[RMDB]
Annotation:
The data come from the RNA Mapping Database (RMDB), library RFM100. The record gives the reactivity of an RNA of 177 nucleotides to 2A3. Values are in units of 0.01, from 0 to 300, in steps of 10. Conditions: 150 mM KOAc, 10 mM MgCl2 and 150 mM bicine (pH 8.5), 24 C.

RNA sequence: GGGAACGACUCGAGUAGAGUCGAAAAAGCGUUACUUCCGAACGGCAAACCAUGGCACUACGAAGUAAACGUAUGAUAGGCAAGAGUAAAGAAAACGCAUUAAUCAAGCGUAGUAUAAGGUGGCAUGGUGGUGCCUAGAGUUCGCUCUAGGCACCACAAAAGAAACAACAACAACAAC
Reactivity to 2A3 in 0.01 (KOAc 150mM, MgCl2 10mM, bicine 150mM(pH8.5), 24C), signal-to-noise 1, nucleotides 027 to 126: a000g000c000g010u000u000a010c000u030u010c010c000g000a030a000c110g000g050c000a040a040a040c010c030a070u200g240g000c060a000c140u080a000c010g000a000a000g000u000a000a000a200c000g070u070a010u080g020a110u010a000g080g000c000a020a100g030a000g100u070a000a150a130g000a130a010a000a000c000g000c000a000u190u300a130a070u050c070a070a000g000c040g000u000a000g000u080a160u010a060a060g130g000u000g000g140c000a000u220g000